Chemical mapping of a 177-nucleotide RNA with 2A3 and DMS.
For DMS, 1,296 sequencing reads were counted.
2A3 adducts were read by reverse transcription with SuperScript II with manganese.
The reactions ran in a buffer of 150 mM KOAc, 10 mM MgCl2 and 150 mM bicine (pH 8.5), at 24 C.
Values cover nucleotides 27 to 126.
The 2A3 profile rests on 1,321 reads.
For DMS the reverse transcriptase was MarathonRT.

[RMDB]
RNA sequence: GGGAACGACUCGAGUAGAGUCGAAAACUCUGUGGUCGAGAGUUCCCACAGUGAGCGAAUGAACUUCGUGAGUUAUCGAAUGACCUCGUGAGUUCCCUUCCACGAGUGAGUGACUGAGCUACCUGCAGCUCAUGGUCAUCUUCGGAUGACCAUGAGCAAAAGAAACAACAACAACAAC
Reactivity to 2A3 in 0.01 (KOAc 150mM, MgCl2 10mM, bicine 150mM(pH8.5), 24C), signal-to-noise 1, nucleotides 027 to 126: c010u000c010u000g080u070g080g200u030c030g000a010g010a020g070u030u020c000c000c000a000c000a000g040u060g050a030g000c050g060a030a120u110g030a120a080c010u000u060c040g070u070g030a070g040u170u140a130u150c060g040a130a110u110g030a060c000c000u030c010g000u030g020a050g040u000u090c030c000c020u050u000c010c030a020c000g010a000g080u070g020a000g010u070g050a080c010u010g020a010g040c000u060a050c000c030u040g030c000a000
Reactivity to DMS in 0.01 (KOAc 150mM, MgCl2 10mM, bicine 150mM(pH8.5), 24C), signal-to-noise 3, nucleotides 027 to 126: c000u010c000u000g050u010g010g040u000c010g000a010g000a300g000u000u000c010c010c000a220c170a040g000u020g010a120g010c060g010a090a020u040g010a120a300c060u000u000c030g010u000g000a100g000u000u000a050u010c070g030a050a110u000g010a220c240c000u000c000g030u020g000a300g030u010u010c000c030c020u000u010c030c030a050c010g010a060g010u000g000a080g020u000g030a160c100u000g000a080g000c000u010a100c070c090u000g020c150a080